[RMDB]
RNA sequence: GGGAACGACUCGAGUAGAGUCGAAAAGUACCAUCAGAAAAUGCUUAAGUCCAUGGCUGCAACUCGUGGAGCGACUUGCGUCAUUGGUACUACAAAGUUCUACGGUGGCUGGGAUUUCAUGCUUAAAGAAUCUAUAUUGGUUCGCCAAUAUAGAUUCAAAAGAAACAACAACAACAAC
Reactivity to DMS in 0.01 (KOAc 150mM, MgCl2 10mM, bicine 150mM(pH8.5), 24C), signal-to-noise 5, nucleotides 027 to 126: g020u000a120c020c010a080u010c100a100g010a080a080a080a090u000g000c060u000u010a070a030g010u000c020c020a040u000g000g000c000u000g030c020a030a040c130u000c020g040u000g020g010a170g020c030g010a030c110u000u000g010c140g010u000c020a070u010u010g020g000u010a020c010u000a070c110a070a050a100g010u000u000c040u000a120c100g020g020u000g010g010c040u000g010g010g000a100u010u000u000c110a060u010g000c050u000u000a050a090a130
Reactivity to 2A3 in 0.01 (KOAc 150mM, MgCl2 10mM, bicine 150mM(pH8.5), 24C), signal-to-noise 6, nucleotides 027 to 126: g010u010a030c020c000a030u070c020a020g160a070a160a050a050u180g020c000u050u070a050a000g010u000c010c010a070u040g020g000c050u110g030c070a020a030c030u020c040g020u080g130g100a130g080c010g030a030c010u010u020g000c000g010u010c000a040u050u240g020g010u070a010c000u010a010c030a010a090a010g020u040u010c010u050a030c050g040g010u020g020g000c020u030g040g010g020a010u040u080u090c050a040u120g020c010u070u090a070a120a040
Source: RMDB library 15KREP, as collected in RNAgym. The record gives the reactivity of an RNA of 177 nucleotides to DMS and 2A3. The reactions ran in a buffer of 150 mM KOAc, 10 mM MgCl2 and 150 mM bicine (pH 8.5), at 24 C. 2A3 adducts were read by reverse transcription with SuperScript II with manganese.